[RMDB]
This 177-nucleotide RNA was probed chemically with DMS and 2A3.
The RNA was probed in 150 mM KOAc, 10 mM MgCl2 and 150 mM bicine (pH 8.5) at 24 C.
Source: RMDB libraries RFM100 and RFMREP, as collected in RNAgym.
DMS adducts were read by reverse transcription with MarathonRT.
Reactivities are given for positions 27 through 126.
RNA sequence: GGGAACGACUCGAGUAGAGUCGAAAAUCUCGGGGCCACAAAACGAGUUCCUGGUAACUCAACUGAUAAUGCCCUGGGCGAAAGUCCCCGGGCCUAGGAUAGAAAGUAUCAAGGUGUAAAAAGUGUGCGGAUGAUAUCUAUUCGUAGAUAUCAUCCGAAAAGAAACAACAACAACAAC
Reactivity to DMS in 0.01 (KOAc 150mM, MgCl2 10mM, bicine 150mM(pH8.5), 24C), signal-to-noise 5, nucleotides 027 to 126: u010c000u000c000g020g000g000g010c040c130a080c090a030a070a110a130c160g000a040g000u000u010c010c130u030g020g010u050a030a020c010u000c040a150a150c140u020g000a110u010a090a100u030g010c010c000c010u010g000g020g010c060g000a090a090a240g000u040c000c000c020c090g000g010g010c010c020u000a030g000g000a040u000a030g020a090a120a080g020u000a030u000c010a060a050g010g000u000g000u020a060a030a080a110a100g000u010g020u020g000
Reactivity to 2A3 in 0.01 (KOAc 150mM, MgCl2 10mM, bicine 150mM(pH8.5), 24C), signal-to-noise 6, nucleotides 027 to 126: u040c020u010c000g010g010g020g020c040c030a050c030a080a110a070a010c070g010a020g020u030u060c030c080u100g070g030u080a030a010c010u000c040a030a040c040u090g040a050u050a170a060u140g000c000c000c000u000g010g000g000c030g130a170a060a040g140u170c030c000c000c010g020g020g000c000c020u080a050g010g040a020u030a070g120a060a190a010g060u020a020u030c060a080a040g050g000u070g040u180a080a100a040a050a000g110u120g040u060g050